[RMDB]
RNA sequence: GGGAACGACUCGAGUAGAGUCGAAAAAGUUAUCUGUGUCUAAUGGUUGCAGUCAAUAUAUCUGUGUCUCUCGGUAGCAUCAAGUUUGGGCUUCGCGCGGCAUGUUGAGCUGCCAGCAGCGGGCAGGCAGAGGUAGCACUUUCGAGUGCUACCUCUGAAAAGAAACAACAACAACAAC
Reactivity to 2A3 in 0.01 (KOAc 150mM, MgCl2 10mM, bicine 150mM(pH8.5), 24C), signal-to-noise 1, nucleotides 027 to 126: a000g060u090u080a090u220c100u060g080u000g020u060c030u050a110a080u150g130g000u060u050g040c000a010g060u060c020a040a030u070a020u010a030u170c030u060g080u000g080u050c010u000c000u010c070g030g020u030a000g000c100a070u070c040a050a060g060u150u080u070g050g000g060c020u070u060c070g020c000g010c010g010g000c000a000u060g030u000u020g070a060g050c010u030g000c050c000a030g000c000a000g030c030g000g040g050c010a020g060g030
Reactivity to DMS in 0.01 (KOAc 150mM, MgCl2 10mM, bicine 150mM(pH8.5), 24C), signal-to-noise 2, nucleotides 027 to 126: a120g000u010u010a040u000c060u000g020u000g020u000c020u010a080a180u000g020g020u010u000g030c030a050g020u000c100a070a080u010a080u020a080u000c060u000g000u010g000u000c030u000c010u000c070g020g020u000a040g030c050a080u000c020a010a130g010u000u000u000g000g010g020c020u000u010c060g020c080g000c050g020g000c060a050u010g010u010u000g010a150g020c080u000g010c010c010a060g040c080a070g030c120g020g000g030c060a030g020g010
Structure probing data (2A3 and DMS) for a 177-nucleotide construct.
The RNA was probed in 150 mM KOAc, 10 mM MgCl2 and 150 mM bicine (pH 8.5) at 24 C.
DMS adducts were read by reverse transcription with MarathonRT.
The 2A3 profile rests on 839 reads.